[RMDB]
RNA sequence: GGGAACGACUCGAGUAGAGUCGAAAACAUUGUUCUGAUCAUCUGAAGAUCAGCUAUUAGAAGAGAAAGAUCAGUUAAGUCCUUUGGACCUGAUUAGCUUGAUACAAGAACUACUGAUUUCAACUUCAAAACGGGUGCUACUUCGGUAGCACCCGAAUCAUGAAACAGUCUUCGGACUGUUUCAUGAAAAAGAAACAACAACAACAAC
Reactivity to DMS in 0.01 (KOAc 150mM, MgCl2 10mM, bicine 150mM(pH8.5), 24C), signal-to-noise 1, nucleotides 027 to 156: c060a170u000u000g010u000u020c000u000g000a010u000c010a090u000c160u010g030a160a160g020a010u010c000a020g000c170u000a100u000u000a210g020a040a020g000a090g030a230a160a050g000a010u000c000a020g040u010u020a090a060g020u000c000c010u000u000u020g040g010a040c010c000u000g010a200u010u010a170g010c170u010u010g020a130u000a040c060a010a070g000a020a040c040u000a120c010u000g000a040u000u010u000c060a080a290c000u000u010c020a060a020a100a120c020g070g020g050u000g000c000u000a010c000u000u000c300g020g000u000a010g010c000a000c000c010c010g000a000a020
Reactivity to 2A3 in 0.01 (KOAc 150mM, MgCl2 10mM, bicine 150mM(pH8.5), 24C), signal-to-noise 3, nucleotides 027 to 156: c040a040u150u170g020u140u100c000u010g010a000u000c010a040u030c110u190g110a180a060g000a010u010c000a000g000c010u130a150u300u160a100g020a020a000g020a000g060a020a080a020g020a000u000c000a010g000u080u120a140a010g010u040c010c010u050u130u160g050g010a060c030c030u090g040a240u110u130a080g060c010u030u120g020a040u080a150c060a010a010g010a010a010c010u020a010c000u080g000a000u000u030u010c060a100a050c010u060u040c020a010a010a080a080c010g000g000g000u000g010c020u000a010c000u040u050c180g090g010u000a000g000c000a000c000c000c000g010a000a000